[RMDB]
RNA sequence: GGGAACGACUCGAGUAGAGUCGAAAAGAUGGUCACCUUACAUCGUGCUAGCGAGGGAACCUUGUCUGGGGGUGAACCGCGAAACAGUUCCAGGCUCACCGUUAGAAAUCCUGUCUUUCGGAGUUCGAGCGGUUAAAUAAAAGAGAGACUAAGCAUGCUUCGAGAUGAAGUUCGCUUCAUCUCGAAGAAAAGAAACAACAACAACAAC
Reactivity to 2A3 in 0.01 (KOAc 150mM, MgCl2 10mM, bicine 150mM(pH8.5), 24C), signal-to-noise 2, nucleotides 027 to 156: g060a030u130g020g010u090c060a050c030c000u150u180a090c030a170u080c030g030u020g040c040u030a070g000c000g050a300g000g010g010a020a020c020c000u070u090g050u040c010u020g030g010g000g000g000u000g030a020a020c010c000g000c000g010a030a080a010c070a010g020u150u100c010c010a010g010g000c030u040c010a000c000c000g000u010u010a010g010a000a010a010u000c000c000u000g000u020c000u020u010u050c000g000g000a000g020u010u000c000g010a010g000c000g000g020u060u090a070a160a030u060a020a030a030a000g020a000g000a000g000a000c040u060a050a000g060c060a050u200g010

Source information: This 207-nucleotide RNA was probed chemically with 2A3. The reactions ran in a buffer of 150 mM KOAc, 10 mM MgCl2 and 150 mM bicine (pH 8.5), at 24 C. The data come from the RNA Mapping Database (RMDB), library RSTRND.